[RMDB]
RNA sequence: GGGAACGACUCGAGUAGAGUCGAAAAGAUAUGGAUGAGCUACCCACCGUCCGACACCUGAGCAAUGCUACUCGGAAACGAGUAGAACUACAUUGCUCAGGUGUCCGGACGAGGCUCAUCCUAAGUCGAUAUGCAGUAUGUUCGCAUACUGCAUAUCAAAAGAAACAACAACAACAAC
Reactivity to DMS in 0.01 (KOAc 150mM, MgCl2 10mM, bicine 150mM(pH8.5), 24C), signal-to-noise 4, nucleotides 027 to 126: g010a150u010a110u000g010g010a020u000g010a020g010c000u000a130c010c010c030a300c090c000g000u000c010c000g000a020c010a020c000c000u000g000a010g000c010a000a000u000g000c010u000a000c010u000c000g000g000a080a160a250c010g000a020g000u000a020g010a020a020c040u000a300c030a020u000u000g000c000u000c000a000g000g000u010g000u000c050c020g000g000a020c010g000a030g010g000c000u000c000a000u000c000c000u010a010a100g010u020c170
Reactivity to 2A3 in 0.01 (KOAc 150mM, MgCl2 10mM, bicine 150mM(pH8.5), 24C), signal-to-noise 4, nucleotides 027 to 126: g140a110u300a210u300g000g000a000u000g000a000g000c010u170a300c000c000c020a010c000c000g000u010c000c000g000a000c000a000c010c000u000g010a000g010c000a010a000u020g010c000u000a000c000u000c010g020g080a130a090a060c010g000a010g010u010a000g010a000a000c010u080a020c000a000u000u000g000c010u000c000a000g010g000u000g000u010c000c000g000g000a000c010g000a000g000g000c000u000c000a010u010c000c000u000a030a020g280u190c140